[RMDB]
RNA sequence: GGGAACGACUCGAGUAGAGUCGAAAAUAAGUAUACGGUUCUUCGUUCGCCUCAUGUGAACAAGGAGUCGCGGGAGCAGUUCGAGAUGAGGAUCCAUAAGCGGCUCGUCGAUAUCCUCAAUCCCACCUCAAAAGACAGAGUUCGCUCUGUCUUUUGAAAAAGAAACAACAACAACAAC
Reactivity to DMS in 0.01 (KOAc 150mM, MgCl2 10mM, bicine 150mM(pH8.5), 24C), signal-to-noise 3, nucleotides 027 to 126: u010a040a090g010u000a070u010a170c040g000g010u000u010c020u000u010c100g020u010u000c040g000c000c210u000c160a080u000g040u010g010a020a010c050a070a040g000g000a010g010u000c030g030c060g030g000g010a060g000c050a130g010u000u000c030g010a140g010a080u010g010a060g020g010a050u000c070c060a080u000a110a080g020c030g010g000c010u000c040g000u000c050g000a110u000a040u000c030c020u000c100a110a140u000c010c000c000a120c200c150
Reactivity to 2A3 in 0.01 (KOAc 150mM, MgCl2 10mM, bicine 150mM(pH8.5), 24C), signal-to-noise 2, nucleotides 027 to 126: u050a020a020g040u060a030u070a180c030g020g010u040u030c010u000u030c050g010u000u020c010g020c010c000u200c180a100u300g020u030g040a020a010c000a020a060g050g000a010g020u020c000g000c020g020g010g010a050g030c050a030g040u100u100c060g000a020g010a260u140g020a050g120g000a070u040c020c020a050u010a240a120g020c010g030g000c010u010c010g010u020c020g020a000u000a020u100c010c010u020c010a000a030u000c010c000c000a040c000c040

The record gives the reactivity of an RNA of 177 nucleotides to DMS and 2A3. Values cover nucleotides 27 to 126. The reactions ran in a buffer of 150 mM KOAc, 10 mM MgCl2 and 150 mM bicine (pH 8.5), at 24 C. In probing experiments dimethyl sulfate is read out at A N1 and C N3, which are open when not base-paired. For DMS the reverse transcriptase was MarathonRT. Source: RMDB library OK2TST, as collected in RNAgym.